[RMDB]
RNA sequence: GGGAACGACUCGAGUAGAGUCGAAAACUCACCAUCCAGUUUUUCCAGAAGAUCUUUGUGCCUGACUAUGACCCCACCAUUGAAGACUCCUACCUGAAACAUACGGAGAUUGACAAUCAAUGGGCCAUCUUGGACGUUCUGGACACAGCUGGGCAGACGUCACGCUAAAUUUCGAUUUAGCGUGACGAAAAGAAACAACAACAACAAC
Reactivity to 2A3 in 0.01 (KOAc 150mM, MgCl2 10mM, bicine 150mM(pH8.5), 24C), signal-to-noise 2, nucleotides 027 to 156: c040u030c040a090c030c010a040u120c000c000a000g000u010u020u110u110u040c020c010a000g010a050a030g060a290u030c110u100u140u230g100u230g120c010c100u100g020a110c090u090a060u230g070a240c040c000c000c050a000c010c000a000u000u000g010a000a000g010a070c060u010c000c010u030a140c010c060u050g070a200a170a060c130a090u140a040c050g010g000a010g080a130u040u080g110a010c020a000a000u010c010a000a050u050g000g010g060c000c000a000u020c010u000u070g010g010a000c040g090u020u000c000u000g000g000a020c050a000c000a110g000c000u000g020g020g000c000a010g010a030

Conditions: 150 mM KOAc, 10 mM MgCl2 and 150 mM bicine (pH 8.5), 24 C. This 207-nucleotide RNA was probed chemically with 2A3. Values cover nucleotides 27 to 156. It was measured as part of the RMDB library OK3TST.